[RMDB]
RNA sequence: GGGAACGACUCGAGUAGAGUCGAAAACACUUGCCGCGGCUGGCGGUGACGAAGAUCUCGACGCCCCAGUGGCGAGCCAGCUGCACCGCCGCCAUGCCCACACCACCGGUUCCGGCAUGGAUCAACAAGCCAGCCUAAUAUUCGUAUUAGGCUGGCUAAAAGAAACAACAACAACAAC
Reactivity to 2A3 in 0.01 (KOAc 150mM, MgCl2 10mM, bicine 150mM(pH8.5), 24C), signal-to-noise 2, nucleotides 027 to 126: c040a010c020u030u040g040c060c060g000c010g010g000c020u020g020g000c030g000g010u030g020a000c040g040a080a020g050a100u060c040u020c070g050a070c040g020c000c000c010c000a120g010u090g130g000c010g020a030g000c000c000a020g000c020u060g020c000a010c020c060g030c030c000g010c020c000a000u020g030c000c010c010a070c010a000c050c020a100c020c190g030g030u030u060c050c020g010g000c020a020u060g000g030a150u090c040a030a040c020a070
Reactivity to DMS in 0.01 (KOAc 150mM, MgCl2 10mM, bicine 150mM(pH8.5), 24C), signal-to-noise 1, nucleotides 027 to 126: c070a060c150u000u000g060c060c090g070c150g000g000c000u050g010g070c190g000g090u000g060a060c050g050a100a160g000a080u000c020u050c000g050a150c030g070c000c000c000c170a070g000u010g000g000c000g050a100g040c140c110a140g000c090u020g030c030a010c070c090g000c000c010g000c000c000a140u000g070c000c070c090a160c160a070c200c000a140c090c000g060g010u000u000c160c210g010g000c000a000u000g000g010a060u000c060a110a070c190a120